[RMDB]
RNA sequence: GGGAACGACUCGAGUAGAGUCGAAAACGCAGUAUACUGCUACUUGUGUGAGAAUACUUUUAGUACAAGCGAGUACACGCAGUAUACUGCUACUUGUGUGAGAAUACUUUUAGUACAAGCGAGUACACUAUCUUACUUCAUUCGUGAAGUAAGAUAGAAAAGAAACAACAACAACAAC
Reactivity to 2A3 in 0.01 (KOAc 150mM, MgCl2 10mM, bicine 150mM(pH8.5), 24C), signal-to-noise 9, nucleotides 027 to 126: c050g000c000a000g000u000a000u000a000c000u000g010c010u000a010c010u030u010g020u010g020u060g140a130g130a170a100u070a060c000u060u180u200u300a090g010u030a020c020a070a010g010c010g010a010g010u070a020c140a020c140g000c010a000g000u000a000u000a000c000u000g000c000u000a010c000u040u070g010u010g010u040g060a060g080a120a090u150a140c000u040u050u070u110a050g010u020a010c040a080a050g090c050g130a030g020u010a010c020a010
Reactivity to DMS in 0.01 (KOAc 150mM, MgCl2 10mM, bicine 150mM(pH8.5), 24C), signal-to-noise 5, nucleotides 027 to 126: c190g000c000a020g010u000a000u000a000c000u000g000c000u010a020c010u000u000g000u000g030u030g000a120g000a110a180u020a000c030u030u040u040u040a050g060u000a030c060a100a300g010c020g000a070g020u000a060c300a110c250g000c000a000g010u000a010u000a000c000u000g000c000u010a000c090u010u020g020u020g010u020g010a100g030a080a090u020a030c040u010u020u000u040a090g030u000a010c050a100a100g010c130g010a170g010u010a020c070a300